[RMDB]
RNA sequence: GGGAACGACUCGAGUAGAGUCGAAAACUCCUGGUCGGUGAACCCCCUGGCUUUGGAUUUCCUCCCAGGUGUAGAAUCAAUCUCCAUGUCCUCUCGCCUGGGCCUCUUCGCCGGGGGUCCUCCCUCUGUAGCAGUGUCUUCGGACACUGCAAAAGAAACAACAACAACAAC
Reactivity to DMS in 0.01 (KOAc 150mM, MgCl2 10mM, bicine 150mM(pH8.5), 24C), signal-to-noise 3, nucleotides 027 to 129: c060u020c000c020u040g010g010u000c000g040g090u020g010a080a090c000c000c000c000c000u050g050g000c030u060u030u030g000g080a130u010u020u040c060c110u000c000c020c010a000g000g040u020g030u140a010g000a070a130u000c110a100a080u010c190u050c090c000a050u040g010u010c180c030u000c000u000c030g020c010c000u000g010g000g030c290c020u020c060u030u010c130g030c000c070g080g020g030g030g010u010c020c040u000c000c000c030u000c010u030g020u050a160
Reactivity to 2A3 in 0.01 (KOAc 150mM, MgCl2 10mM, bicine 150mM(pH8.5), 24C), signal-to-noise 4, nucleotides 027 to 129: c020u010c000c000u040g010g070u080c040g020g030u070g080a060a040c010c000c000c000c040u070g000g000c010u100u070u120g070g000a050u080u070u120c000c030u020c010c010c000a000g010g000u010g040u160a000g020a000a020u060c020a050a090u040c090u000c160c040a080u110g030u010c030c010u000c000u000c000g010c000c000u000g000g010g020c020c000u050c030u080u070c010g000c000c000g000g010g010g000g000u010c000c000u010c010c010c000u030c000u050g070u070a030
The data come from the RNA Mapping Database (RMDB), library 15KLIB. The record gives the reactivity of an RNA of 170 nucleotides to DMS and 2A3. DMS adducts were read by reverse transcription with MarathonRT. For DMS, 7,168 sequencing reads were counted. Conditions: 150 mM KOAc, 10 mM MgCl2 and 150 mM bicine (pH 8.5), 24 C.